[RMDB]
RNA sequence: GGGAACGACUCGAGUAGAGUCGAAAAUAUGACAGUUAAUGGAGGGAACGAAAUGAAAGCUUUAUUACUUAAAACAAGUGUAUGGCUCGUUUUGCUUUUUAGUGUGAUGGGAUUAUGGCAAGUCUCGUAACUGUCUUGGAUUCGUCCAAGACAGUUAAAAAGAAACAACAACAACAAC
Reactivity to DMS in 0.01 (KOAc 150mM, MgCl2 10mM, bicine 150mM(pH8.5), 24C), signal-to-noise 6, nucleotides 027 to 126: u050a060u010g020a070c090a070g030u010u020a060a070u010g000g010a060g000g000g000a050a090c040g000a020a040a060u030g010a140a110a070g010c030u010u000u020a030u000u030a030c030u010u010a060a080a060a110c260a010a020g020u010g010u000a010u000g000g000c000u000c040g010u010u000u000u010g000c060u010u040u010u010u010a040g010u010g030u000g000a060u000g000g000g010a040u000u010a090u010g010g010c070a030a100g000u000c020u000c070g030
Reactivity to 2A3 in 0.01 (KOAc 150mM, MgCl2 10mM, bicine 150mM(pH8.5), 24C), signal-to-noise 6, nucleotides 027 to 126: u300a110u190g070a040c050a030g040u080u130a110a060u160g050g010a000g030g000g010a060a070c040g030a140a030a000u190g090a180a080a020g000c010u040u050u020a030u060u150a050c020u040u090a050a070a100a060c060a060a040g000u020g000u030a060u030g020g010c000u010c030g040u030u060u040u040g060c050u100u060u080u040u170a140g020u070g020u040g090a060u090g020g000g000a020u040u040a060u130g010g000c020a010a060g040u000c020u010c050g030